[RMDB]
RNA sequence: GGGAACGACUCGAGUAGAGUCGAAAAACUAGAACGUGGAGUAAACCGAAAGGGUGCUGCUGGAUUCUUCGAGCAUAAAAACAUAGGAGAAGUUUUGAACACUGAAAAGGAGAAGGUAGAGAGGUUAUCGUAAGAUCGCAUUCGUGCGAUCUUACGAAAAAGAAACAACAACAACAAC
Reactivity to 2A3 in 0.01 (KOAc 150mM, MgCl2 10mM, bicine 150mM(pH8.5), 24C), signal-to-noise 2, nucleotides 027 to 126: a000c080u040a020g070a100a000c010g050u030g010g060a030g020u060a050a110a090c020c000g100a220a010a000g020g030g000u040g000c010u060g000c000u050g050g040a120u040u010c000u070u000c040g050a000g030c050a020u120a070a130a000a030a000c040a020u160a080g040g090a040g030a080a020g000u000u010u020u160g090a100a000c040a020c190u110g110a080a010a040a040g020g000a040g000a010a140g020g010u100a020g020a000g000a000g190g060u000u080a020
Reactivity to DMS in 0.01 (KOAc 150mM, MgCl2 10mM, bicine 150mM(pH8.5), 24C), signal-to-noise 3, nucleotides 027 to 126: a120c040u030a070g020a020a100c040g010u030g030g020a100g020u000a050a070a080c050c010g000a060a090a140g000g010g000u010g020c060u020g030c020u000g010g000a060u000u000c030u000u000c030g000a050g020c170a060u010a050a110a060a050a050c100a100u020a130g000g010a090g000a080a080g010u000u000u010u020g000a050a100c130a060c070u040g000a020a040a030a050g000g010a060g010a050a090g020g020u010a050g000a080g020a000g010g020u000u000a150
About this RNA: Structure probing data (2A3 and DMS) for a 177-nucleotide construct. For DMS the reverse transcriptase was MarathonRT. The reactions ran in a buffer of 150 mM KOAc, 10 mM MgCl2 and 150 mM bicine (pH 8.5), at 24 C. Source: RMDB library OK1LIB, as collected in RNAgym. Reactivities are given for positions 27 through 126.